[RMDB]
The data come from the RNA Mapping Database (RMDB), library 15KLIB. This 170-nucleotide RNA was probed chemically with 2A3 and DMS. The reactions ran in a buffer of 150 mM KOAc, 10 mM MgCl2 and 150 mM bicine (pH 8.5), at 24 C.
RNA sequence: GGGAACGACUCGAGUAGAGUCGAAAAGAUGGGCCUCAGUUCCGAGCGAAGAGCCGAACCGGGAAGAGGAAGCGCCCGAGAGGGAGCCAAUGCCAAAGAGGUGGGGAUCGUCGGAAGGUAUCGUCCCGAACUUCUACGUUCGCGUAGAAGAAAAGAAACAACAACAACAAC
Reactivity to 2A3 in 0.01 (KOAc 150mM, MgCl2 10mM, bicine 150mM(pH8.5), 24C), signal-to-noise 9, nucleotides 027 to 129: g040a030u120g000g010g010c000c010u060c040a040g030u110u060c030c030g000a020g020c040g040a060a050g020a030g060c030c040g010a040a020c020c020g000g010g010a040a020g010a020g030g010a020a020g030c040g030c010c010c020g030a040g010a030g010g010g000a010g000c010c030a070a060u150g030c010c030a070a080a030g060a030g030g010u100g010g020g000g010a020u030c030g050u010c010g040g020a020a020g040g010u070a060u130c040g030u020c000c010c000g010a050a040
Reactivity to DMS in 0.01 (KOAc 150mM, MgCl2 10mM, bicine 150mM(pH8.5), 24C), signal-to-noise 9, nucleotides 027 to 129: g000a060u020g010g000g010c050c030u050c060a100g040u000u000c060c050g000a010g030c150g000a080a040g020a110g030c080c070g000a040a070c060c040g010g000g010a020a090g030a000g030g020a080a050g010c090g030c080c050c040g010a080g030a080g020g020g010a050g010c070c090a090a060u050g020c030c100a080a110a070g010a060g030g010u060g010g000g000g000a030u010c000g030u020c050g010g010a020a010g000g020u030a050u000c090g020u010c030c010c020g000a040a080